This 177-nucleotide RNA was probed chemically with 2A3 and DMS. For 2A3 the reverse transcriptase was SuperScript II with manganese. Source: RMDB library OK1LIB, as collected in RNAgym. The DMS profile rests on 2,309 reads.
[RMDB]
RNA sequence: GGGAACGACUCGAGUAGAGUCGAAAAUUUCUCCAGUCUGGGCGGAGGAGAGACUCGCGCUCUCGCUCCGGCCCAGCUGCGGAUCUGAGAGAGCGGCGACAGAGCAGCUGGCGAAGCGCGCGAGGCCCCGGGUAUAUGGGUUCGCCCAUAUACCCGGAAAAGAAACAACAACAACAAC
Reactivity to 2A3 in 0.01 (KOAc 150mM, MgCl2 10mM, bicine 150mM(pH8.5), 24C), signal-to-noise 1, nucleotides 027 to 126: u030u010u010c020u010c040c000a000g060u020c010u020g000g050g000c000g000g040a010g000g020a000g000a010g060a050c020u010c170g060c120g000c080u000c020u000c000g280c060u000c000c020g020g040c000c000c000a010g000c010u000g000c010g130g000a060u030c010u100g010a020g000a000g010a010g080c010g060g000c010g000a000c020a050g020a020g010c000a000g050c040u020g020g000c060g050a080a000g060c030g010c030g040c030g060a050g050g000c020c000
Reactivity to DMS in 0.01 (KOAc 150mM, MgCl2 10mM, bicine 150mM(pH8.5), 24C), signal-to-noise 1, nucleotides 027 to 126: u000u000u050c000u000c090c020a130g020u050c040u010g000g010g040c000g010g010a010g000g000a000g000a010g000a070c030u020c150g000c080g040c000u000c000u010c000g010c000u000c000c000g060g070c000c000c000a000g000c020u000g000c160g000g050a080u010c020u020g030a190g000a080g030a060g000c070g010g000c070g010a090c130a080g000a160g020c100a140g000c000u000g000g000c070g000a130a070g000c090g000c040g000c000g000a160g000g010c040c070